Chemical mapping of a 207-nucleotide RNA with 2A3.
RNA sequence: GGGAACGACUCGAGUAGAGUCGAAAAACAGUACCAGCUGCUACGGCAGCUGGUACUGAACUUUCAAGGAGUUAAGAAACCACGUAAACAAAGCGGAACCGAAAAGCUAAACGAGUAGGAAGAAUAAAUAGGUACCACCACUUCGGUGGUGGUACAAUCGUACAGUACAGUUCGCUGUACUGUACGAAAAAGAAACAACAACAACAAC
Reactivity to 2A3 in 0.01 (KOAc 150mM, MgCl2 10mM, bicine 150mM(pH8.5), 24C), signal-to-noise 1, nucleotides 027 to 156: a010c000a000g000u000a000c000c000a000g000c000u020g120c000u020a030c190g120g060c010a000g030c020u000g060g000u000a000c000u000g000a000a000c000u000u090u080c040a000a090g180g000a040g050u060u160a210a020g070a190a040a000c050c000a120c070g060u150a000a000a260c110a140a140a000g000c040g000g050a020a070c020c000g000a000a010a010a010g000c080u180a200a000a000c000g000a000g000u040a030g010g090a000a010g010a070a050u160a180a060a080u160a090g050g060u000a000c010c020a030c000c000a030c010u040u040c180g170g010u000g000g000u000g000g000u000a000c000a000a000

The reactions ran in a buffer of 150 mM KOAc, 10 mM MgCl2 and 150 mM bicine (pH 8.5), at 24 C.